[RMDB]
RNA sequence: GGGAACGACUCGAGUAGAGUCGAAAAGAAAAGACGAUGUUAUUAUGAUUCUCGAGUAAUAGCAGGUCAUGCGUACUACUCGCCGAACGGAAGGCCGACUGUUCGCGAAAUGAAACGAGAAAGAAAAGACGGUAUACUGAUUCGUCAGUAUACCGUCAAAAGAAACAACAACAACAAC
Reactivity to 2A3 in 0.01 (KOAc 150mM, MgCl2 10mM, bicine 150mM(pH8.5), 24C), signal-to-noise 6, nucleotides 027 to 126: g060a000a080a010a020g030a010c030g050a140u020g010u010u020a030u020u020a020u090g130a160u090u000c020u010c010g020a020g000u020a010a030u010a000g010c010a010g000g110u110c050a060u170g010c010g020u040a040c030u020a050c010u040c020g030c030c030g050a070a040c040g040g030a060a030g070g010c010c010g020a020c000u020g010u030u100c000g000c020g070a020a070a140u220g050a050a060a060c020g000a010g030a040a070a000g110a030a130a010a030
Reactivity to DMS in 0.01 (KOAc 150mM, MgCl2 10mM, bicine 150mM(pH8.5), 24C), signal-to-noise 4, nucleotides 027 to 126: g000a130a100a100a120g000a070c060g000a090u000g010u030u020a040u010u010a020u010g030a060u010u020c010u000c010g010a240g000u010a020a040u000a020g010c020a020g000g010u020c090a040u000g020c020g010u010a060c040u000a110c140u000c010g010c160c030g000a030a010c070g000g000a040a170g000g010c040c060g000a160c010u000g000u030u000c020g000c070g000a030a040a090u040g000a030a050a060c030g010a040g000a030a080a110g020a090a060a060a120
The record gives the reactivity of an RNA of 177 nucleotides to 2A3 and DMS. The 2A3 profile rests on 7,203 reads. Values cover nucleotides 27 to 126. Source: RMDB library OK1LIB, as collected in RNAgym.